[RMDB]
RNA sequence: GGGAACGACUCGAGUAGAGUCGAAAAGAAUCCCCAUGACGCUGGAAGAGACUUCCGGGUAACCAAGUCAAGGAGAAGGAACGGUAGAAAAGAGCGAGCCUCUCGAUACGAAAGGGCCGCGAGCCUAGUUUAAAUGAUUGUUCGCAAUCAUUUAAACAAAAGAAACAACAACAACAAC
Reactivity to DMS in 0.01 (KOAc 150mM, MgCl2 10mM, bicine 150mM(pH8.5), 24C), signal-to-noise 4, nucleotides 027 to 126: g010a230a150u000c030c000c000c100a140u000g000a040c050g020c050u010g000g010a070a050g000a200g010a120c080u000u000c030c040g030g000g010u000a070a110c110c100a060a070g000u000c040a090a110g020g010a070g020a080a090g010g000a070a040c060g000g020u000a060g000a070a040a090a080g010a180g000c030g010a110g010c040c000u000c030u010c020g000a150u000a090c090g000a030a070a100g000g000g020c000c020g010c070g000a120g020c020c020u000a110
Reactivity to 2A3 in 0.01 (KOAc 150mM, MgCl2 10mM, bicine 150mM(pH8.5), 24C), signal-to-noise 3, nucleotides 027 to 126: g030a040a080u050c030c000c000c000a070u110g020a010c010g010c080u000g020g010a050a020g060a070g050a240c060u050u000c030c000g040g000g040u030a050a060c040c040a090a010g030u040c010a030a050g060g020a050g040a060a050g040g000a060a040c040g010g060u080a040g130a080a110a060a010g080a020g030c010g000a030g020c030c010u060c010u010c020g050a090u070a300c040g030a110a020a060g000g020g020c030c010g000c050g020a010g010c000c000u040a030